[RMDB]
RNA sequence: GGGAACGACUCGAGUAGAGUCGAAAAAUAAAGCAACGCGAGCAACGCGAGCAACGCGAGCAACGCGAGCAACGCGAGCAACGCGAGCAACGCGAGCAACGCGAGCAACGCGUGCAACGCGAAAAAACGUGUUAUGCAACUUCGGUUGCAUAACACGAAAAGAAACAACAACAACAAC
Reactivity to 2A3 in 0.01 (KOAc 150mM, MgCl2 10mM, bicine 150mM(pH8.5), 24C), signal-to-noise 1, nucleotides 027 to 126: a000u150a050a040a000g040c120a100a110c010g000c000g000a000g000c030a020a230c020g000c000g030a050g000c030a080a220c000g050c000g020a040g170c050a070a140c060g030c010g030a020g030c040a030a200c010g040c010g040a110g180c080a130a100c010g030c000g030a020g050c000a040a210c000g000c010g060a090g000c060a100a110c010g000c000g030a000g020c030a070a120c000g000c000g000u010g010c040a070a160c010g030c020g130a090a020a000a000a000a000